[RMDB]
RNA sequence: GGGAACGACUCGAGUAGAGUCGAAAAAAUGACGAAAGGGUGGAUACGAAAUGGCUUCUAAAACAAAGAAGGCUAUUAUCGACGUAAAGAAACAAUUUGAGGCUGUUCAUAAACAAUUUGAAUUGGUUCAUAGUCAACUAUUCGUAGUUGACUAUGAAAAAGAAACAACAACAACAAC
Reactivity to 2A3 in 0.01 (KOAc 150mM, MgCl2 10mM, bicine 150mM(pH8.5), 24C), signal-to-noise 7, nucleotides 027 to 126: a000a000u100g030a020c040g050a060a040a050g030g020g020u060g020g030a040u050a140c010g020a010a010a030u010g020g010c000u010u000c020u060a110a120a100a060c120a080a120a010g010a010a010g160g020c030u020a020u020u030a190u030c010g050a060c020g060u080a040a080a030g070a030a060a010c020a010a070u000u040u110g010a010g040g020c100u040g010u040u030c030a050u130a090a060a030c030a040a070u020u030u140g070a060a040u050u040g060g000u040
Reactivity to DMS in 0.01 (KOAc 150mM, MgCl2 10mM, bicine 150mM(pH8.5), 24C), signal-to-noise 5, nucleotides 027 to 126: a080a070u010g010a090c050g000a060a030a060g000g000g030u010g000g000a120u020a060c080g010a040a060a050u000g000g000c010u010u020c010u000a040a050a080a110c300a080a060a020g000a050a040g000g020c000u010a010u010u000a080u000c030g000a130c130g010u030a060a060a090g010a090a040a040c070a020a030u010u020u000g000a030g010g000c110u010g000u010u010c180a070u030a050a060a040c070a040a050u030u010u010g000a010a040u010u000g010g010u000
This 177-nucleotide RNA was probed chemically with 2A3 and DMS. Source: RMDB libraries RFM100 and RFMREP, as collected in RNAgym. High DMS reactivity at an A or C suggests that its Watson-Crick edge is free. Conditions: 150 mM KOAc, 10 mM MgCl2 and 150 mM bicine (pH 8.5), 24 C.